[RMDB]
RNA sequence: GGGAACGACUCGAGUAGAGUCGAAAACAGUUAUGUGCGUCCCUCCCGAAGCUGCGCGCUCGGUCGAAGAGGACGACCAUCGCCGAUAGAGGACGUCCGGUCUUCGGUCAAGGGAAUAAGAGUAAAAUUAACUUACAUCGUUCGCGAUGUAAGUUAAAAAAGAAACAACAACAACAAC
Reactivity to 2A3 in 0.01 (KOAc 150mM, MgCl2 10mM, bicine 150mM(pH8.5), 24C), signal-to-noise 4, nucleotides 027 to 126: c020a020g050u200u200a180u240g100u090g030c040g020u030c020c000c010u010c040c010c000g060a090a010g000c020u050g020c070g010c040g020c140u030c070g010g020u000c010g000a040a010g000a060g020g000a000c010g000a010c020c000a180u050c030g050c120c070g110a080u180a140g060a050g040g000a010c000g000u000c010c000g070g120u000c000u030u000c010g000g010u050c040a040a080g000g010g040a020a090u130a130a020g170a030g110u180a020a040a060a150
Reactivity to DMS in 0.01 (KOAc 150mM, MgCl2 10mM, bicine 150mM(pH8.5), 24C), signal-to-noise 5, nucleotides 027 to 126: c050a090g010u000u000a070u000g030u000g000c090g010u000c010c000c020u000c020c010c010g000a080a080g020c020u000g020c150g010c120g020c010u000c110g010g010u000c040g010a040a030g000a180g000g000a040c020g020a050c010c010a070u000c040g010c190c120g000a140u010a090g000a060g000g010a090c010g000u000c050c030g000g010u000c000u000u000c010g020g000u000c040a100a070g000g010g000a070a080u000a080a070g000a110g000u010a040a070a070a110